[RMDB]
RNA sequence: GGGAACGACUCGAGUAGAGUCGAAAAGCAUGCAGAGCUGCGGUUCGCUCUUAAAACUGGUCGCAGAUUCAUAAUUGCCAACGACAGCAAUUACGCCCUCGCUGCUUAAGCAGUGAGCCCUCUGCCCGGAUUUGUCUGUGGAUCCGGAGCCGAAAGGACUGUUCCUGAUGUUCGCAUCAGGAACAGUAAAAGAAACAACAACAACAAC
Reactivity to 2A3 in 0.01 (KOAc 150mM, MgCl2 10mM, bicine 150mM(pH8.5), 24C), signal-to-noise 2, nucleotides 027 to 156: g040c060a010u180g050c040a000g020a040g050c030u050g000c050g000g020u100u140c070g000c050u030c020u120u110a060a110a020a030c030u080g000g020u050c010g000c000a000g000a070u120u120c040a020u070a180a010u010u020g000c010c030a130a030c110g080a050c040a020g020c010a030a020u080u060a090c090g110c020c010c000u020c000g020c000u020g000c000u300u200a260a040g000c000a000g000u010g000a010g000c000c000c000u000c010u030g000c000c000c000g000g000a010u000u030u010g160u080c110u110g090u130g030g000a000u000c000c000g020g040a060g000c000c020g040a050a020a000g040g040

This 207-nucleotide RNA was probed chemically with 2A3. The reactions ran in a buffer of 150 mM KOAc, 10 mM MgCl2 and 150 mM bicine (pH 8.5), at 24 C.